[RMDB]
Conditions: 150 mM KOAc, 10 mM MgCl2 and 150 mM bicine (pH 8.5), 24 C. Structure probing data (DMS) for a 177-nucleotide construct. DMS adducts were read by reverse transcription with MarathonRT. Reactivities are given for positions 27 through 126. Values are in units of 0.01, from 0 to 300, in steps of 10.
RNA sequence: GGGAACGACUCGAGUAGAGUCGAAAAGAUAUGGAGUAGGCAAUGUAUCGAGACGUUCAACAGCUACACCUGUCGGAAACGACAGUUGUAGACAUGAACAACUCGAUACAUUGCCUACUCCUAAGUCGAAUAUGAUGAUCUUCGGAUCAUCAUAUUCAAAAGAAACAACAACAACAAC
Reactivity to DMS in 0.01 (KOAc 150mM, MgCl2 10mM, bicine 150mM(pH8.5), 24C), signal-to-noise 6, nucleotides 027 to 126: g010a070u000a300u020g000g000a000g030u000a000g000g010c000a020a010u000g000u000a000u000c010g010a020g020a100c300g000u000u000c010a030a140c300a200g010c010u000a020c000a010c060c000u000g020u000c000g020g000a080a070a210c000g010a010c020a000g020u000u000g000u000a010g000a020c120a210u000g010a030a000c000a170a300c000u000c000g000a000u000a000c000a010u000u000g000c010c000u000a000c000u000c000c000u000a000a060g010u010c130